[RMDB]
Structure probing data (2A3 and DMS) for a 177-nucleotide construct.
RNA sequence: GGGAACGACUCGAGUAGAGUCGAAAAACUGCGGUAUUCGUACCGCAGUACAUAAAUAGGAUAAAAUACCAGUAGCCCGAAACGCAAGCGAGCACUACUGGCGCAAGAACCACUUCGGUGGUUCUAAGCUCCUGUUUUCGUUCGCGAAAACAGGAGCAAAAGAAACAACAACAACAAC
Reactivity to 2A3 in 0.01 (KOAc 150mM, MgCl2 10mM, bicine 150mM(pH8.5), 24C), signal-to-noise 1, nucleotides 027 to 126: a000c000u000g000c010g000g030u040a060u020u070c100g040u050a000c000c000g000c000a000g000u000a010c010a010u300a020a180a010u160a040g060g050a030u110a180a140a010a000u170a060c000c010a000g010u010a000g070c020c080c060g040a090a140a000c110g030c110a000a140g040c020g120a010g040c020a000c020u040a010c010u000g040g000c000g000c000a050a010g000a020a010c000c010a010c030u010u070c190g080g010u010g000g000u010u000c000u000a000a020
Reactivity to DMS in 0.01 (KOAc 150mM, MgCl2 10mM, bicine 150mM(pH8.5), 24C), signal-to-noise 1, nucleotides 027 to 126: a020c010u000g010c000g030g000u000a010u000u000c130g000u000a000c000c000g010c000a000g010u000a010c070a070u000a160a120a090u000a060g020g030a060u010a050a050a160a160u000a070c010c030a090g050u000a050g050c080c060c020g020a050a040a060c190g030c190a060a040g000c030g050a030g010c140a060c070u010a030c020u010g000g020c070g000c110a090a020g000a030a000c000c000a000c000u000u000c260g020g010u000g020g020u000u000c000u000a110a140
It was measured as part of the RMDB library M2PK50.